[RMDB]
RNA sequence: GGGAACGACUCGAGUAGAGUCGAAAAGACAAGUUGGCUAAGAUACUAGAUAUCAGAUUCCAAAGUGAGAUAUCAGAUCAAGAUAGAUUGCUGUAGCAUAUAGAAUCCUCCAGUAUAACCUGAACUCAGCCUUGAGCCAUGGGACAUUCCAGUGCCCGUGAUCUUCUACAUUCGUGUAGAAGAUCACAAAAGAAACAACAACAACAAC
Reactivity to 2A3 in 0.01 (KOAc 150mM, MgCl2 10mM, bicine 150mM(pH8.5), 24C), signal-to-noise 4, nucleotides 027 to 156: g070a020c070a060a040g050u050u030g030g010c040u080a080a000g000a050u090a240c040u110a130g030a040u050a030u020c050a050g060a300u110u130c090c070a170a100a040g080u120g030a090g010a040u040a020u030c010a000g020a040u030c030a100a030g030a070u080a050g080a060u060u140g010c020u040g050u130a030g020c050a050u120a020u050a160g080a030a070u060c040c020u020c040c000a010g020u050a040u040a220a060c020c000u030g010a030a030c000u020c070a010g040c000c000u030u030g040a000g010c000c010a010u120g000g000g010a010c010a070u080u060c020c000a050g040u080g230c010c010c000
Reactivity to DMS in 0.01 (KOAc 150mM, MgCl2 10mM, bicine 150mM(pH8.5), 24C), signal-to-noise 2, nucleotides 027 to 156: g000a040c010a100a170g000u010u000g000g040c070u010a050a110g000a110u010a050c030u000a130g000a120u000a070u000c000a160g000a180u000u000c030c090a030a070a130g000u000g010a120g070a140u010a030u000c030a120g010a100u000c070a140a080g020a170u000a090g030a110u000u010g020c020u010g010u010a090g010c080a080u020a140u010a090g010a020a100u010c060c080u000c040c020a100g050u000a060u000a100a060c030c020u010g010a030a070c040u000c040a060g000c040c030u010u030g000a010g050c000c030a100u000g000g020g010a090c020a060u000u000c010c040a140g010u000g000c020c040c010
Structure probing data (2A3 and DMS) for a 207-nucleotide construct. Source: RMDB library OK3TST, as collected in RNAgym. The 2A3 profile rests on 1,824 reads. Conditions: 150 mM KOAc, 10 mM MgCl2 and 150 mM bicine (pH 8.5), 24 C. For 2A3 the reverse transcriptase was SuperScript II with manganese.